[RMDB]
RNA sequence: GGGAACGACUCGAGUAGAGUCGAAAAACGUGCUCAUACGUGAGCACGAACGGCGUGAUGAUUGACGGGUCUGCUGAGCGGUGAUGACCCGUUGGAGCUCUGACCAGCGUGGUCUACGGACCACGCAGUAUUAUAGGGGGUUCGCCCCCUAUAAUACAAAAGAAACAACAACAACAAC
Reactivity to 2A3 in 0.01 (KOAc 150mM, MgCl2 10mM, bicine 150mM(pH8.5), 24C), signal-to-noise 9, nucleotides 027 to 126: a000c000g000u000g000c000u000c010a020u040a070c280g120u040g010a000g000c000a000c000g010a030a010c020g020g000c030g020u070g030a120u030g010a040u100u100g010a010c010g000g000g000u020c010u030g040c030u070g090a090g120c120g030g050u100g070a200u160g010a020c000c000c000g000u000u010g000g010a010g000c010u000c020u040g080a070c010c020a010g000c000g000u000g000g000u000c010u020a070c240g070g000a000c000c000a000c000g000c000a000
Reactivity to DMS in 0.01 (KOAc 150mM, MgCl2 10mM, bicine 150mM(pH8.5), 24C), signal-to-noise 6, nucleotides 027 to 126: a110c010g020u000g010c000u000c010a050u000a110c200g030u000g000a010g000c000a010c000g010a040a080c090g000g000c070g010u000g010a080u010g010a120u010u020g010a020c020g010g000g010u000c010u000g010c070u000g010a110g020c130g000g020u000g010a100u010g010a020c020c000c000g000u000u000g010g000a120g010c050u000c040u000g000a170c040c040a090g010c010g040u000g000g010u000c000u000a080c180g020g000a020c000c010a000c000g010c000a020